[RMDB]
RNA sequence: GGGAACGACUCGAGUAGAGUCGAAAAUACGCUGGUAGCAGCAAGUAGCAGCUCUAUCCGCAGAUGAGCGGAAUAUACACAUGACAAUGGAUCUCGAUAGAGCUGCUACAAUCGAGACCAUUAGAGAACCAGCAUAAAUGUUCGCAUUUAUGCUGGUAAAAGAAACAACAACAACAAC
Reactivity to 2A3 in 0.01 (KOAc 150mM, MgCl2 10mM, bicine 150mM(pH8.5), 24C), signal-to-noise 6, nucleotides 027 to 126: u210a030c060g000c010u030g040g120u210a120g210c000a000g000c010a020a050g010u020a000g010c000a000g000c000u010c000u020a050u010c020c010g000c030a030g090a300u240g110a040g030c020g000g070a010a000u120a010u030a020c140a000c040a100u270g110a120c050a050a010u030g050g080a200u020c000u000c000g020a030u030a070g000a000g000c000u000g000c000u000a000c000a000a000u020c000g010a000g000a000c000c000a040u030u120a060g030a000g030a100
Reactivity to DMS in 0.01 (KOAc 150mM, MgCl2 10mM, bicine 150mM(pH8.5), 24C), signal-to-noise 4, nucleotides 027 to 126: u030a080c170g020c000u000g000g010u040a140g010c000a030g000c040a190a180g010u000a000g010c010a010g010c000u010c000u000a280u000c030c010g030c030a140g030a130u040g000a130g000c030g000g000a060a090u050a090u080a060c250a040c260a080u000g000a230c130a090a030u000g000g000a120u000c010u000c020g000a020u020a000g000a020g000c000u000g020c010u000a000c000a030a110u010c000g000a010g030a050c040c020a030u000u030a140g010a260g000a090